RNA sequence: GGGAACGACUCGAGUAGAGUCGAAAACAGGAUCCGACCUUCGGUUCUUUACUCGUUCAAGCUCGAGAUUUUCUCGGGUUCGAUGGAGCAGCUUUGGAGAACAUUCCAGCCCGCAUCUGGGCGAGAACAAUGAUCAGCAGUUCGCUGCUGAUCAUUGAAAAGAAACAACAACAACAAC
Reactivity to 2A3 in 0.01 (KOAc 150mM, MgCl2 10mM, bicine 150mM(pH8.5), 24C), signal-to-noise 2, nucleotides 027 to 126: c020a010g010g050a040u010c000c000g060a150c090c070u170u110c000g030g060u040u000c000u010u120u090a100c010u020c020g040u050u000c010a030a010g070c020u010c030g040a040g020a110u080u140u240u100c010u000c000g000g050g000u080u000c020g010a030u050g070g020a100g050c010a010g000c020u050u240u130g040g000a080g040a170a060c010a120u110u080c000c000a000g000c000c010c040g120c020a160u090c090u130g000g000g050c010g000a020g030a030a010
Reactivity to DMS in 0.01 (KOAc 150mM, MgCl2 10mM, bicine 150mM(pH8.5), 24C), signal-to-noise 2, nucleotides 027 to 126: c110a100g000g000a040u010c020c020g010a160c150c170u020u010c030g000g010u000u000c020u000u000u010a120c020u000c010g030u000u000c020a100a100g000c020u000c000g010a010g020a150u010u000u000u020c000u000c010g000g000g010u000u010c130g020a030u000g020g010a010g000c040a100g000c090u000u030u010g020g020a100g000a080a170c160a100u000u000c020c030a110g000c020c010c050g020c110a060u010c100u000g030g000g000c000g000a060g020a110a150